[RMDB]
This 207-nucleotide RNA was probed chemically with 2A3 and DMS. The DMS profile rests on 10,002 reads. The 2A3 profile rests on 13,678 reads. 2A3 adducts were read by reverse transcription with SuperScript II with manganese. Source: RMDB library M2RFPK, as collected in RNAgym.
RNA sequence: GGGAACGACUCGAGUAGAGUCGAAAAGAUUGAUGUAGAGUUCGGUUGGAGCGACAAGUAUUUAGCUUGAGAUAGCUAAAUCACCUCGGUAUGAUUAGGGUGAGACCUAGGAACCGUAGGGGUAUUCAAUGCUGUAUUGCGUUCGCGCAAUACAGAAACACAAAUUAAGUUUCGACUUAAUUUGUGUAAAAGAAACAACAACAACAAC
Reactivity to 2A3 in 0.01 (KOAc 150mM, MgCl2 10mM, bicine 150mM(pH8.5), 24C), signal-to-noise 9, nucleotides 027 to 156: g050a020u040u120g020a030u100g020u060a030g010a000g040u050u070c050g010g010u010u030g020g010a030g020c050g040a040c030a050a030g030u070a050u010u010u000a000g000c000u010u020g030a030g010a060u110a030g010c000u000a000a010a010u010c010a020c000c000u010c010g010g000u300a200u170g030a050u030u020a010g020g000g020u050g080a060g030a040c000c000u010a010g020g020a030a010c010c010g010u030a030g000g010g000g010u020a060u060u150c090a070a100u140g040c000u000g000u000a000u000u000g010c010g020u020u040c200g000c000g000c100a000a000u000a000c000a000g000a010a030
Reactivity to DMS in 0.01 (KOAc 150mM, MgCl2 10mM, bicine 150mM(pH8.5), 24C), signal-to-noise 3, nucleotides 027 to 156: g010a100u000u000g010a070u000g010u000a070g010a100g020u010u000c080g020g030u000u000g000g010a090g050c020g030a060c030a040a080g030u000a060u000u000u000a010g010c000u000u000g000a300g000a120u000a020g000c020u000a010a010a030u000c040a040c000c010u000c020g000g010u000a080u010g010a210u000u000a040g020g020g010u000g000a280g010a110c010c020u010a050g020g010a080a090c040c020g010u000a050g020g010g010g000u000a050u000u010c080a060a130u000g030c000u000g020u000a000u000u000g010c000g030u000u000c300g040c000g020c000a010a010u000a000c000a000g000a040a080